[RMDB]
RNA sequence: GGGAACGACUCGAGUAGAGUCGAAAAGAUAUGGAUCCGAGGAGACAUGCCUUGGGAUCGGAAACGAUCCGAAGGCAACAGCUCCCGGAUCCUAAGUCAAAUCGUCGGUAGUUCGCUACCGACGAAAGAAUGAAAUCUACUUCGGUAGAUUUCAUUCAAAAGAAACAACAACAACAAC
Reactivity to DMS in 0.01 (KOAc 150mM, MgCl2 10mM, bicine 150mM(pH8.5), 24C), signal-to-noise 3, nucleotides 027 to 126: g000a000u000a020u000g000g000a000u000c000c000g010a190g020g010a030g000a020c040a300u020g010c000c010u010u010g000g010g010a010u000c000g020g010a000a010a030c010g010a020u000c000c000g010a020a020g010g020c000a040a020c210a160g010c000u010c020c000c000g000g000a000u000c000c000u000a000a050g000u000c010a100a150a180u000c000g000u000c010g020g010u000a010g020u000u010c270g020c000u000a000c000c000g000a010c000g000a000a040a060
Reactivity to 2A3 in 0.01 (KOAc 150mM, MgCl2 10mM, bicine 150mM(pH8.5), 24C), signal-to-noise 4, nucleotides 027 to 126: g000a000u010a020u050g000g000a000u000c010c010g090a300g080g020a020g020a030c290a300u300g020c000c020u010u020g150g000g000a010u000c000g000g000a010a000a000c000g000a020u000c010c060g180a010a000g000g000c030a040a020c030a020g000c000u000c000c000c000g010g000a000u000c010c000u000a000a000g000u000c000a010a020a280u040c000g000u000c010g000g000u000a010g010u050u110c300g000c130u010a000c010c000g010a000c000g000a000a000a020